[RMDB]
The data come from the RNA Mapping Database (RMDB), library OK2TST. Structure probing data (DMS and 2A3) for a 177-nucleotide construct. High DMS reactivity at an A or C suggests that its Watson-Crick edge is free. Reactivities are given for positions 27 through 126. The DMS profile rests on 2,461 reads. The RNA was probed in 150 mM KOAc, 10 mM MgCl2 and 150 mM bicine (pH 8.5) at 24 C.

RNA sequence: GGGAACGACUCGAGUAGAGUCGAAAACGGCGUACCAGUAACGAUAGCAUCUGACGAUCCAACAAUUCAGGAUUCUUUGCUGACAGAUGAUUAUAUGAAAGCCAUUGUGAAUUUUAACUGGAAUAUCCAGAAACUAGGGAUUCGUCCCUAGUUUCUGAAAAGAAACAACAACAACAAC
Reactivity to DMS in 0.01 (KOAc 150mM, MgCl2 10mM, bicine 150mM(pH8.5), 24C), signal-to-noise 4, nucleotides 027 to 126: c130g010g020c010g020u010a140c010c020a030g000u000a060a190c090g000a030u000a040g000c010a020u000c020u000g010a150c200g000a050u000c010c030a090a100c160a100a090u010u020c150a150g000g000a020u010u000c070u000u020u000g020c130u000g000a290c040a010g010a020u000g000a100u000u000a040u000a040u000g010a080a100a110g010c030c040a110u010u000g010u000g030a090a090u010u000u010u000a030a160c010u000g000g010a160a100u010a100u000c090
Reactivity to 2A3 in 0.01 (KOAc 150mM, MgCl2 10mM, bicine 150mM(pH8.5), 24C), signal-to-noise 2, nucleotides 027 to 126: c070g000g000c040g040u060a070c010c000a010g030u030a070a020c080g020a020u020a030g000c010a000u020c020u070g030a060c020g030a030u020c020c010a030a100c040a180a140u250u170c020a010g000g040a040u080u030c030u170u130u170g110c070u030g060a060c010a040g020a000u070g020a000u020u090a060u040a040u070g090a090a050a000g010c010c010a050u050u180g090u070g030a050a100u060u100u120u240a050a010c000u030g000g010a060a030u150a070u230c050